[RMDB]
RNA sequence: GGGAACGACUCGAGUAGAGUCGAAAAACGGACUACGGUCCGAAGGGUUCGGGGUACUAGUGUGAAUGCCCGGCUAGUACCCUGUGCUAGUGGUUUAUCUACUGAUGUUCAAUUAACGGCAUUUGAAAAAAGACUCCUAACUUCGGUUAGGAGUCAAGAACUGUGUCUAGUUCGCUAGACACAGUUCAAAAGAAACAACAACAACAAC
Reactivity to 2A3 in 0.01 (KOAc 150mM, MgCl2 10mM, bicine 150mM(pH8.5), 24C), signal-to-noise 1, nucleotides 027 to 156: a000c010g010g000a010c010u060a030c110g100g000u030c020c010g040a070a010g090g000g030u120u260c000g000g030g000g000u020a000c000u000a000g010u000g010u020g130a070a080u040g010c010c040c000g030g050c000u000a000g010u000a000c010c010c000u010g000u040g000c000u030a100g030u010g150g090u130u170u240a080u230c010u030a030c070u120g060a210u110g200u230u230c110a220a090u100u110a210a040c030g000g000c000a000u040u070u140g100a140a080a000a000a000a020g000a010c010u010c010c000u000a000a000c000u030u040c110g000g000u000u020a000g020g000a000g000u000c000a000a000